[RMDB]
RNA sequence: GGGAACGACUCGAGUAGAGUCGAAAAGUGCUGCUCAACAAGCUGCAGGGCAGUGACUGGUUCGCCAGCGUCACGGCGUCGAUCACCGGCGCGUCUAACGCGUUCGCGGAUUUCGUGUUCGGCCUGCGCCCUAGUAGGUUUUCGAACCUACUAGGGCAAAAGAAACAACAACAACAAC
Reactivity to DMS in 0.01 (KOAc 150mM, MgCl2 10mM, bicine 150mM(pH8.5), 24C), signal-to-noise 3, nucleotides 027 to 126: g030u000g020c000u000g010c020u020c020a120a100c140a100a120g010c080u000g020c090a090g000g000g000c020a030g010u000g010a040c020u010g000g000u000u000c080g040c010c050a080g010c070g010u000c050a040c120g000g010c040g030u010c020g000a120u010c120a120c180c000g000g010c020g010c010g010u020c070u000a060a070c040g010c010g000u010u020c100g020c070g010g000a110u000u000u000c040g020u000g000u000u000c040g010g010c010c020u000g020c150
Reactivity to 2A3 in 0.01 (KOAc 150mM, MgCl2 10mM, bicine 150mM(pH8.5), 24C), signal-to-noise 2, nucleotides 027 to 126: g030u040g000c000u000g000c010u030c030a050a100c000a100a110g100c040u060g040c080a070g030g050g000c010a020g000u000g170a040c020u040g000g040u050u020c030g010c040c030a010g030c020g080u070c030a020c090g040g040c000g060u040c020g030a100u100c020a010c180c000g000g000c010g010c010g000u000c050u090a080a040c040g020c010g040u170u150c070g000c040g050g040a040u110u000u080c070g010u030g020u060u000c020g000g070c010c030u060g030c030